Chemical mapping of a 177-nucleotide RNA with 2A3 and DMS. The DMS profile rests on 26,958 reads. The reactions ran in a buffer of 150 mM KOAc, 10 mM MgCl2 and 150 mM bicine (pH 8.5), at 24 C.

[RMDB]
RNA sequence: GGGAACGACUCGAGUAGAGUCGAAAAAGAUACGAGUGAUAGGAAUUUGCACAAUACCGACGAAUUACUAUGGCGCUAACUCCAGACAGAGCUAGGAUCAACGAUAGGCGUGGAAACAGCGUGUCUCGAUAAUAUAUGAGUUCGCUCAUAUAUUAUCAAAAGAAACAACAACAACAAC
Reactivity to 2A3 in 0.01 (KOAc 150mM, MgCl2 10mM, bicine 150mM(pH8.5), 24C), signal-to-noise 9, nucleotides 027 to 126: a000g080a030u070a040c040g010a020g050u070g050a040u040a050g020g040a040a060u030u030u090g030c050a040c020a160a160u100a180c060c050g070a100c030g030a090a020u050u010a030c030u040a050u090g050g000c010g000c030u020a040a040c020u000c030c010a020g030a090c040a030g080a030g040c020u060a040g050g050a080u070c030a050a070c040g030a040u070a110g120g000c040g030u050g020g050a070a110a010c020a030g030c010g040u030g030u000c020u020c050
Reactivity to DMS in 0.01 (KOAc 150mM, MgCl2 10mM, bicine 150mM(pH8.5), 24C), signal-to-noise 9, nucleotides 027 to 126: a080g010a080u000a050c070g010a080g020u000g000a080u000a040g010g010a050a040u000u000u000g010c050a080c110a120a080u010a080c130c060g010a200c050g000a050a030u000u000a050c050u000a030u000g000g010c050g010c040u000a050a070c080u000c020c040a090g010a080c130a070g000a060g000c040u010a060g010g000a090u010c070a050a070c100g010a140u010a080g010g010c030g030u000g010g000a080a060a080c100a070g000c050g010u000g010u000c030u000c100